[RMDB]
Chemical mapping of a 177-nucleotide RNA with DMS and 2A3. Values cover nucleotides 27 to 126.

RNA sequence: GGGAACGACUCGAGUAGAGUCGAAAAACACCGCGACUACGGUCGCGGUGACGCGAUGAUGAGUGAAUCCAAUGCUGAUGAGAUGAUGAGCCCCAAACCUGAGCACGUGCGGUUACGACCGCACGAAUGAGCGGUAUAUUUUCGAAUAUACCGCUCAAAAAGAAACAACAACAACAAC
Reactivity to DMS in 0.01 (KOAc 150mM, MgCl2 10mM, bicine 150mM(pH8.5), 24C), signal-to-noise 3, nucleotides 027 to 126: a130c010a030c000c020g020c020g020a030c030u010a100c240g020g090u010c010g090c010g030g010u000g000a030c140g000c120g020a050u010g010a050u000g000a060g010u000g010a100a080u010c080c030a090a110u020g010c040u040g000a070u010g020a040g000a070u010g000a050u020g000a090g000c030c030c000c020a010a050a110c130c040u010g000a080g030c090a120c040g030u000g000c000g020g030u000u010a130c130g010a040c000c000g040c000a000c000g000a010a080
Reactivity to 2A3 in 0.01 (KOAc 150mM, MgCl2 10mM, bicine 150mM(pH8.5), 24C), signal-to-noise 3, nucleotides 027 to 126: a000c030a010c010c000g010c020g040a000c010u040a010c300g130g000u000c000g020c000g000g000u000g020a010c010g030c060g020a050u140g030a050u030g030a050g080u110g080a070a020u040c050c030a040a040u130g020c020u040g010a080u030g000a030g000a090u060g010a010u030g040a020g050c040c000c000c000a010a140a130c000c030u110g040a030g040c040a010c040g030u000g000c030g020g000u070u040a110c270g010a010c010c000g000c000a000c000g000a000a080